[RMDB]
RNA sequence: GGGAACGACUCGAGUAGAGUCGAAAAGUGUCGAAGAUCGAAGCUACCGUUUCCCGGAGUCCGGUAGCGAGAUCGAGAUACGAGAGGACGACGGGUAUCGGAUGACGUGUAAGCUUUACCCGUCCCGCUUACACGUUAUCCUUGAGGGACGGGAUGACCGCUAAUGAUUAUUCGUAAUCAUUAGCGGAAAAGAAACAACAACAACAAC
Reactivity to 2A3 in 0.01 (KOAc 150mM, MgCl2 10mM, bicine 150mM(pH8.5), 24C), signal-to-noise 3, nucleotides 027 to 156: g030u020g010u010c020g080a140a000g000a030u010c010g050a130a020g000c000u000a000c000c000g020u040u080u070c040c050c040g050g020a080g050u050c060c000g000g000u010a000g000c010g010a000g010a010u000c000g000a010g000a020u020a010c020g000a020g010a020g080g020a010c040g010a020c030g000g000g050u090a070u190c070g010g040a040u130g010a030c000g000u000g000u000a010a000g000c010u150u120u160a150c020c010c000g020u020c000c010c000g000c000u000u000a000c000a000c000g000u000u020a060u060c020c000u020u070g030a030g000g000g010a010c010g000g000g010a000u050g060a020
Reactivity to DMS in 0.01 (KOAc 150mM, MgCl2 10mM, bicine 150mM(pH8.5), 24C), signal-to-noise 2, nucleotides 027 to 156: g020u000g040u000c020g020a120a210g000a000u000c020g000a220a300g010c000u000a030c000c000g020u000u000u010c030c010c030g040g010a230g020u000c160c000g010g020u000a030g000c020g010a240g000a030u000c020g010a300g000a070u000a040c050g000a160g020a140g010g020a040c030g010a100c050g030g000g000u010a070u010c070g050g030a030u000g010a010c030g010u050g000u000a060a040g000c020u000u000u000a110c040c000c090g010u000c020c010c050g020c050u000u010a030c000a000c000g020u000u000a040u000c030c020u000u010g010a080g000g000g000a200c050g020g000g020a180u000g000a200